Description:
Chemical mapping of a 207-nucleotide RNA with 2A3 and DMS. For DMS the reverse transcriptase was MarathonRT. The data come from the RNA Mapping Database (RMDB), library OK3TST. Reactivities are given for positions 27 through 156.
[RMDB]
RNA sequence: GGGAACGACUCGAGUAGAGUCGAAAAUAUACAGAUAAAACGUAUAACACACUAGAGAGUUAUUUAGAUUAUGAUGAUUUAUCUAGUUGGGAUGAGUACGAAAAGUUAACUGAAGUUUCCGCUUUUACUAACUUCGAUGGUACAUUAAAACAGCUAACUCUUAGUGACUGUUCGCAGUCACUAAGAGAAAAGAAACAACAACAACAAC
Reactivity to 2A3 in 0.01 (KOAc 150mM, MgCl2 10mM, bicine 150mM(pH8.5), 24C), signal-to-noise 1, nucleotides 027 to 156: u060a000u010a000c020a000g120a020u240a070a040a000a000c000g010u000a010u070a160a010c020a000c010a000c000u030a010g000a000g000a010g070u000u040a100u050u100u180a050g100a290u080u130a040u300g000a000u000g020a020u010u040u110a120u150c000u000a040g000u080u100g060g010g000a070u080g010a030g050u010a070c000g000a020a030a020a030g030u030u000a040a040c070u030g050a030a030g010u010u060u070c030c020g010c020u000u000u060u070a050c030u050a040a030c020u020u080c080g070a050u110g000g000u060a030c020a020u120u130a060a070a000a000c000a030g070c000u040a060a000
Reactivity to DMS in 0.01 (KOAc 150mM, MgCl2 10mM, bicine 150mM(pH8.5), 24C), signal-to-noise 1, nucleotides 027 to 156: u000a090u010a110c060a150g020a140u010a060a030a090a160c030g000u000a090u000a080a150c030a050c030a080c000u000a030g020a060g020a090g020u000u000a010u000u000u010a170g000a260u010u010a120u000g000a060u020g000a040u000u000u000a040u030c020u000a030g000u030u010g000g010g000a200u020g040a170g020u000a030c010g000a060a070a010a070g020u000u000a030a090c010u010g000a020a080g030u000u010u010c300c260g030c080u000u010u000u000a030c010u000a030a030c000u000u000c000g000a160u000g050g010u000a000c060a090u000u000a090a060a020a070c040a070g000c040u000a040a180